[RMDB]
RNA sequence: GGGAACGACUCGAGUAGAGUCGAAAAGAUCUGCGCCGAUCCGAAACGCUAGCAAACAGCCCGCAUCAUGUCGUCUCCUAACUUCGACGUGGUGAACUACUGAGCUUAUGCGAGUAAGCCUGUUAGCAAUAGAUCAGAACGUUCGCGUUCUGAUCAAACUGUGGAUUAUGUUCGCAUAAUCCACAGUAAAAGAAACAACAACAACAAC
Reactivity to DMS in 0.01 (KOAc 150mM, MgCl2 10mM, bicine 150mM(pH8.5), 24C), signal-to-noise 3, nucleotides 027 to 156: g000a110u000c040u000g030c080g020c040c050g030a110u000c030c070g010a100a090a070c090g030c030u000a040g030c030a100a090a120c050a100g030c000c060c030g010c020a040u000c030a040u010g020u000c000g000u000c110u000c100c070u000a130a080c080u010u010c000g000a030c000g070u010g020g020u010g000a050a090c040u010a090c030u010g000a100g040c020u000u000a050u000g030c270g030a280g000u000a030a060g020c000c040u000g030u000u000a020g010c010a080a130u010a120g050a020u000c000a030g000a010a000c000g030u000u000c300g040c000g040u000u000c000u000g000a000u000c010a030a020
Reactivity to 2A3 in 0.01 (KOAc 150mM, MgCl2 10mM, bicine 150mM(pH8.5), 24C), signal-to-noise 7, nucleotides 027 to 156: g030a050u030c020u060g010c030g020c040c030g030a070u050c030c040g050a050a060a010c050g000c070u060a020g020c050a060a040a080c020a070g040c020c010c010g040c010a010u020c000a000u010g010u010c000g040u000c060u110c100c100u130a140a170c070u050u050c010g010a010c000g010u000g000g000u000g030a020a010c000u070a010c010u050g020a030g030c000u030u010a010u070g090c040g030a050g060u010a010a000g010c000c010u060g040u150u040a020g000c050a090a130u040a210g000a010u000c000a000g000a000a000c000g010u030u050c180g010c010g100u010u000c020u000g000a000u000c000a000a000